[RMDB]
RNA sequence: GGGAACGACUCGAGUAGAGUCGAAAAAUUCACGUAAUCAAUAACAGCUGGCGAUGCUGUGAUGCGUGAUCGCCACUCACUACUACCGUUUAGCUUGUCUAGGUCGCGUGCCAAAACCUCAGCACGGAGCCAUAUGCGUAUUCGUACGCAUAUGGCUAAAAGAAACAACAACAACAAC
Reactivity to 2A3 in 0.01 (KOAc 150mM, MgCl2 10mM, bicine 150mM(pH8.5), 24C), signal-to-noise 2, nucleotides 027 to 126: a000u100u020c000a000c020g010u060a060a200u060c020a070a140u100a140a090c000a000g030c010u130g300g040c120g140a080u160g000c010u020g020u060g010a010u030g010c030g020u050g050a000u020c020g020c030c010a070c020u040c020a060c150u170a020c010u050a070c000c060g040u020u070u190a000g080c010u020u040g030u000c040u020a040g040g020u060c020g020c000g080u010g030c020c010a030a050a030a060c020c050u110c040a040g000c030a010c030g050g050
Reactivity to DMS in 0.01 (KOAc 150mM, MgCl2 10mM, bicine 150mM(pH8.5), 24C), signal-to-noise 2, nucleotides 027 to 126: a120u000u000c000a020c010g020u000a060a040u000c060a100a110u010a170a110c010a020g000c000u010g040g030c200g010a080u020g000c010u020g000u000g010a020u000g010c000g030u000g010a020u000c150g010c050c030a080c060u000c040a070c070u020a100c120u000a040c060c010g000u000u000u020a070g000c060u010u000g000u000c060u000a100g000g010u000c090g000c070g030u000g020c020c060a040a030a070a100c030c030u000c070a080g000c050a060c040g000g010